[RMDB]
RNA sequence: GGGAACGACUCGAGUAGAGUCGAAAACGGAGUCGUAGUUCGGAUUGCGGGCUGAAACCCGCCCGCAUGAAGCUGGAUUCGGUAGUAAUCGCGUGUCAGAAGCGCGCGGUGAAUACGUCCCUGCUCCUCUAAGGGAGUCUUUCGAGACUCCCUUAGAAAAAGAAACAACAACAACAAC
Reactivity to 2A3 in 0.01 (KOAc 150mM, MgCl2 10mM, bicine 150mM(pH8.5), 24C), signal-to-noise 4, nucleotides 027 to 126: c040g060g020a010g010u020c030g020u080a040g040u100u120c010g010g020a020u010u040g000c000g000g000g000c030u060g080a170a110a090c050c040c040g000c000c000c000g010c000a000u020g010a010a010g020c040u040g010g000a060u080u040c040g030g020u030a010g010u010a000a000u010c000g000c010g010u000g060u110c120a110g060a260a030g060c000g000c000g000c000g000g020u020g000a010a050u090a070c020g010u020c000c000c010u020g020c030u040c020c000
Reactivity to DMS in 0.01 (KOAc 150mM, MgCl2 10mM, bicine 150mM(pH8.5), 24C), signal-to-noise 5, nucleotides 027 to 126: c070g000g000a000g010u000c010g020u020a010g010u010u030c030g000g000a090u020u000g010c000g000g000g020c000u020g010a090a100a130c300c120c160g000c010c000c000g000c000a010u010g000a300a100g020c040u010g000g000a020u000u000c010g000g000u000a020g010u010a100a000u000c010g000c000g010u000g010u010c040a200g000a170a260g000c000g010c000g000c000g010g010u010g000a160a150u010a050c060g010u000c000c000c000u020g010c090u010c160c080
About this RNA: The record gives the reactivity of an RNA of 177 nucleotides to 2A3 and DMS. The reactions ran in a buffer of 150 mM KOAc, 10 mM MgCl2 and 150 mM bicine (pH 8.5), at 24 C.